This 177-nucleotide RNA was probed chemically with DMS and 2A3. DMS adducts were read by reverse transcription with MarathonRT. Values cover nucleotides 27 to 126. The DMS profile rests on 2,442 reads.
[RMDB]
RNA sequence: GGGAACGACUCGAGUAGAGUCGAAAACGAUGUGACCGGUGUAGUUCUUGCCGACACAGACCACCUUGCUGGCAAGUAUCGGGGCCAGCAGCCGCACAUCGGCCAACGGCCACGAGCGGCCGGUGAAUCAGUUUUACCUCUUCGGAGGUAAAACUGAAAAAGAAACAACAACAACAAC
Reactivity to DMS in 0.01 (KOAc 150mM, MgCl2 10mM, bicine 150mM(pH8.5), 24C), signal-to-noise 2, nucleotides 027 to 126: c080g010a040u010g000u020g000a090c130c060g020g050u000g020u060a110g000u020u010c040u000u030g000c040c000g000a090c040a010c140a080g000a210c170c070a110c130c040u000u000g020c000u000g000g010c010a080a040g000u010a010u020c110g000g000g000g000c000c000a030g000c270a030g000c080c020g000c140a200c200a050u000c000g020g000c010c030a070a190c070g010g020c000c010a050c120g000a050g030c190g010g030c000c050g000g000u010g000a130a120
Reactivity to 2A3 in 0.01 (KOAc 150mM, MgCl2 10mM, bicine 150mM(pH8.5), 24C), signal-to-noise 3, nucleotides 027 to 126: c020g030a050u060g040u020g080a120c100c010g010g000u050g070u090a150g050u140u020c040u050u070g000c030c030g060a040c020a000c010a050g060a090c000c030a060c020c050u020u050g000c000u040g000g000c000a070a110g010u020a190u080c060g000g000g030g000c000c010a020g000c010a000g000c010c010g040c030a060c000a140u160c030g000g000c000c000a060a030c090g000g010c000c010a030c080g020a050g020c040g020g000c010c010g010g020u040g050a020a100